An RNA of 177 nucleotides, treated with 2A3 and DMS and read out base by base.

RNA sequence: GGGAACGACUCGAGUAGAGUCGAAAAGAGCGUCGAGAGACGAAGAGAAGUGCAUCGAUCCACAACGGAGAACGUAAUAAUGCACCCAUGUGGUUUAGUGUCCGGAACAACGGGCACAAGAGGCAGACCAUAGGGAGCGAUUCGUCGCUCCCUAUGGAAAAGAAACAACAACAACAAC
Reactivity to 2A3 in 0.01 (KOAc 150mM, MgCl2 10mM, bicine 150mM(pH8.5), 24C), signal-to-noise 5, nucleotides 027 to 126: g110a020g030c000g000u000c000g010a000g000a000g000a070c040g020a050a000g080a000g050a200a050g040u050g000c010a020u020c050g060a110u000c000c020a040c020a130a070c180g040g000a070g040a150a060c060g020u040a010a070u100a100a050u210g010c030a040c000c000c000a060u090g020u050g060g110u030u040u130a040g000u000g010u000c010c000g010g050a080a120c110a120a060c080g000g000g000c010a000c000a000a020g070a010g020g000c050a010g050a050
Reactivity to DMS in 0.01 (KOAc 150mM, MgCl2 10mM, bicine 150mM(pH8.5), 24C), signal-to-noise 3, nucleotides 027 to 126: g020a040g020c020g000u000c000g000a220g020a230g000a030c000g010a070a030g010a090g000a070a090g020u020g000c010a020u000c030g010a090u010c000c000a070c170a050a120c160g000g020a110g000a040a090c100g010u020a070a100u040a110a030u020g000c060a110c030c000c040a090u010g000u010g000g020u000u010u020a080g010u000g010u000c000c000g000g020a120a100c290a090a170c010g000g000g000c000a000c000a050a040g000a030g010g010c070a070g000a200
About this RNA:
DMS (dimethyl sulfate) methylates the pairing face of unpaired adenines and cytosines. For 2A3, 3,908 sequencing reads were counted. For 2A3 the reverse transcriptase was SuperScript II with manganese. Source: RMDB library OK1LIB, as collected in RNAgym. The reactions ran in a buffer of 150 mM KOAc, 10 mM MgCl2 and 150 mM bicine (pH 8.5), at 24 C. DMS adducts were read by reverse transcription with MarathonRT. For DMS, 8,902 sequencing reads were counted. Reactivities are given for positions 27 through 126.